The record gives the reactivity of an RNA of 177 nucleotides to DMS.
RNA sequence: GGGAACGACUCGAGUAGAGUCGAAAAUCACGUCUGCCGGUCUCGCUGCCGUUUGUUGCCCGAACUCGCACGAUGCAGGCCACCGGUCGGGACGGGUCCGAACGUGUCACGCUGAUGGUGACCGAUGAUAAGUAGCGGAGUUCGCUCCGCUACUUAUAAAAGAAACAACAACAACAAC
Reactivity to DMS in 0.01 (KOAc 150mM, MgCl2 10mM, bicine 150mM(pH8.5), 24C), signal-to-noise 2, nucleotides 027 to 126: u010c040a080c060g000u010c020u000g010c000c000g010g000u000c050u000c080g030c170u000g000c000c090g000u010u000u000g020u010u010g020c000c070c040g000a080a090c120u010c130g020c130a050c080g050a060u010g020c010a070g000g000c070c030a050c110c000g020g020u010c060g020g000g000a090c010g000g000g000u000c200c040g000a030a120c050g000u010g020u000c000a040c050g020c080u000g000a120u010g010g010u000g010a040c020c040g000a110u000g010
The reactions ran in a buffer of 150 mM KOAc, 10 mM MgCl2 and 150 mM bicine (pH 8.5), at 24 C. It was measured as part of the RMDB library OK2TST. The DMS profile rests on 2,125 reads.